[RMDB]
RNA sequence: GGGAACGACUCGAGUAGAGUCGAAAAGUUCCCUCUUAGCGUGGAGGUUUAACUACGCUCGUUCCCCAUAUCGGUGUUGGCGCACCGGAUUUAUAAAUCAAAGUCCUUUAGGGAACGGAAAGGAACAAAAAUCCAUGGGAGUUCGCUCCCAUGGAAACAGUUUCUUAGACUUCGGUCUAAGAAACUGAAAAGAAACAACAACAACAAC
Reactivity to DMS in 0.01 (KOAc 150mM, MgCl2 10mM, bicine 150mM(pH8.5), 24C), signal-to-noise 1, nucleotides 027 to 156: g050u000u000c000c000c030u010c050u000u010a020g060c000g080u000g010g030a100g020g030u010u000u000a110a170c010u000a010c020g020c020u010c000g040u000u000c010c000c000c060a260u000a030u010c010g030g020u010g030u000u020g000g040c300g000c010a030c020c000g020g020a080u010u010u010a110u010a140a040a160u000c150a100a110a140g030u030c000c040u000u010u000a120g000g000g010a050a060c010g030g000a060a020a060g030g010a090a190c080a020a090a070a200a130u000c000c000a010u000g010g010g020a050g020u000u010c300g030c010u000c000c000c000a010u000g000g000a010a030a130
Reactivity to 2A3 in 0.01 (KOAc 150mM, MgCl2 10mM, bicine 150mM(pH8.5), 24C), signal-to-noise 1, nucleotides 027 to 156: g000u020u000c000c000c010u010c010u040u010a000g000c010g010u020g000g000a050g060g100u210u210u070a010a030c010u010a000c010g020c010u000c000g000u000u000c020c020c000c000a010u070a020u060c010g000g020u010g010u020u120g060g050c080g000c020a000c000c020g000g010a020u030u120u030a170u080a020a110a060u210c100a100a020a000g020u010c000c000u080u190u150a070g000g010g050a010a080c080g010g040a080a080a000g060g010a080a020c040a020a210a010a000a040u030c010c010a010u000g000g000g000a000g010u080u080c090g040c100u000c020c000c010a000u000g000g000a000a000a000